RNA sequence: GGGAACGACUCGAGUAGAGUCGAAAAACGCACGUCUACGGACGUGCGAAGUCCGUCUACCCGUAGCUCCUAUCCAUGUUACUGGUCAAAAAGUGAACAUGGAAGCAGGUACAGGUGCACGGCGAAACGAGGAGAAACGUUUCGACGUUUCUCCUCGAAAAGAAACAACAACAACAAC
Reactivity to DMS in 0.01 (KOAc 150mM, MgCl2 10mM, bicine 150mM(pH8.5), 24C), signal-to-noise 3, nucleotides 027 to 126: a150c040g000c000a010c000g000u000c010u000a050c190g050g000a030c000g060u000g000c000g000a020a030g010u010c000c000g000u000c000u010a000c000c000c070g050u010a010g000c000u000c130c000u000a180u000c000c000a010u010g010u010u000a010c010u000g000g010u000c300a070a030a050a300a020g000u000g040a060a000c010a000u000g010g000a020a010g000c290a000g000g010u000a010c000a020g000g030u010g010c290a010c000g010g030c000g010a070a100a090
Reactivity to 2A3 in 0.01 (KOAc 150mM, MgCl2 10mM, bicine 150mM(pH8.5), 24C), signal-to-noise 6, nucleotides 027 to 126: a000c010g000c000a000c000g010u010c010u030a100c300g140g000a000c000g030u000g000c010g000a000a000g060u010c000c000g000u000c000u050a020c010c000c010g020u020a040g110c020u030c010c000u160a300u190c020c000a000u000g000u000u000a010c000u050g150g060u230c070a130a080a030a020a010g030u130g160a030a020c000a000u000g000g000a000a000g010c000a010g030g050u010a000c000a000g000g000u010g000c050a000c010g020g000c020g020a020a110a020
Annotation: The record gives the reactivity of an RNA of 177 nucleotides to DMS and 2A3. The RNA was probed in 150 mM KOAc, 10 mM MgCl2 and 150 mM bicine (pH 8.5) at 24 C.